[RMDB]
RNA sequence: GGGAACGACUCGAGUAGAGUCGAAAAGGAUCUGAGUACUUAUAAGUGCGAAGUGAGUGAGGGUCUUACGAGCACCAAUUACAUCCCUCUAUUAAGUAUCGAAGAUCGGCCGGAGAUCGAGAUACAACUAUUAGCCGGCGACUGUACGAAGAUCCGAACCUCGUCAUUACUUCGGUAAUGACGAGGUAAAAGAAACAACAACAACAAC
Reactivity to 2A3 in 0.01 (KOAc 150mM, MgCl2 10mM, bicine 150mM(pH8.5), 24C), signal-to-noise 1, nucleotides 027 to 156: g000g000a000u000c000u000g000a000g020u000a000c000u130u120a070u140a300a070g020u000g010c020g020a000a040g020u020g000a030g000u130g050a020g060g000g030u180c020u000u000a000c000g010a010g000c010a020c070c000a090a120u130u080a030c050a160u120c030c000c010u010c000u000a130u100u240a190a000g000u000a000u050c010g000a050a000g000a000u000c020g030g000c000c000g000g030a050g010a030u000c000g000a000g000a070u000a000c000a000a010c000u070a040u300u130a040g140c000c000g010g010c010g020a050c020u120g000u000a020c010g010a010a000g010a000u040c000c000g000a000

Notes: The record gives the reactivity of an RNA of 207 nucleotides to 2A3. The 2A3 profile rests on 534 reads. The RNA was probed in 150 mM KOAc, 10 mM MgCl2 and 150 mM bicine (pH 8.5) at 24 C.